[RMDB]
RNA sequence: GGGAACGACUCGAGUAGAGUCGAAAAGAUAUGGAGUCUUAGGCUUUUGACGAGGCCUACUCGGAAACGAGUAGGAUCUCGAUAAGCCUCAAGACUCCUAAGUCAAACGAUGCCUUCGGGCAUCGAAGAUCUCUUGAACGUUCGCGUUCAAGAGAUCAAAAGAAACAACAACAACAAC
Reactivity to 2A3 in 0.01 (KOAc 150mM, MgCl2 10mM, bicine 150mM(pH8.5), 24C), signal-to-noise 3, nucleotides 027 to 126: g030a000u020a010u120g030g000a020g020u000c010u000u000a010g030g000c050u080u130u230u300g300a280c120g000a000g000g000c010c010u010a000c000u000c010g010g030a090a080a030c000g000a000g020u010a000g000g020a040u040c000u000c010g010a010u050a050a020g010c020c000u000c010a000a030g000a000c000u000c000c000u000a020a000g010u010c000a020a010a110c040g010a000u000g000c000c000u060u140c300g120g000g000c020a000u000c000g000a030a010
Reactivity to DMS in 0.01 (KOAc 150mM, MgCl2 10mM, bicine 150mM(pH8.5), 24C), signal-to-noise 2, nucleotides 027 to 126: g000a020u000a300u010g010g000a040g010u000c000u010u010a010g010g010c000u000u010u010u010g020a160c190g000a000g000g000c000c010u000a010c000u000c000g000g000a060a060a140c000g000a030g020u010a010g000g010a020u010c000u000c000g020a070u000a010a010g000c000c000u000c250a000a000g000a010c010u000c000c010u010a020a050g010u010c020a140a150a280c020g010a010u000g000c010c010u000u010c300g050g020g000c000a010u000c000g000a100a080